[RMDB]
RNA sequence: GGGAACGACUCGAGUAGAGUCGAAAAUGUGUGGUUGUGAUUAUUUAUUACAGAGCCUCAUCCAUUGUAACAUCACCUCCGUAGUCAAGGUAUGUGAUCAAUAUAUGUGCGAAAUGCAUUAACAUGUAGUAACUUGAAAUUUGGCAACUCAGGAGAAUAAGUACGACCUAUUCGUAGGUCGUACUUAAAAAGAAACAACAACAACAAC
Reactivity to 2A3 in 0.01 (KOAc 150mM, MgCl2 10mM, bicine 150mM(pH8.5), 24C), signal-to-noise 3, nucleotides 027 to 156: u140g060u020g020u040g090g000u030u050g030u000g100a060u020u080a040u150u160u080a100u050u060a060c050a060g140a010g070c030c020u040c030a020u000c060c020a030u000u090g030u100a050a060c030a040u040c130a030c040c000u020c070c120g150u140a060g140u070c070a050a010g020g020u040a010u010g040u000g010a070u100c040a080a000u030a000u000a040u160g070u050g010c020g020a160a110a070u150g010c000a000u130u130a100a020c030a040u080g010u060a030g010u020a080a000c010u040u050g110a040a070a050u070u070u040g010g000c020a020a020c050u010c050a040g000g110a070g040a100a070
Reactivity to DMS in 0.01 (KOAc 150mM, MgCl2 10mM, bicine 150mM(pH8.5), 24C), signal-to-noise 2, nucleotides 027 to 156: u000g040u000g030u000g030g010u000u010g000u000g010a110u000u000a140u010u000u010a060u010u000a090c030a090g030a170g030c020c050u000c050a060u000c060c050a130u010u030g030u000a130a070c030a070u010c110a050c000c030u010c030c000g040u010a110g020u010c040a040a040g000g010u000a030u000g000u000g010a130u000c030a040a060u000a080u000a060u010g010u010g020c000g020a070a070a190u000g010c100a060u000u000a040a050c060a050u000g010u000a050g010u000a040a060c060u000u010g010a060a070a150u000u000u000g010g020c010a040a030c040u000c020a100g010g000a140g000a050a190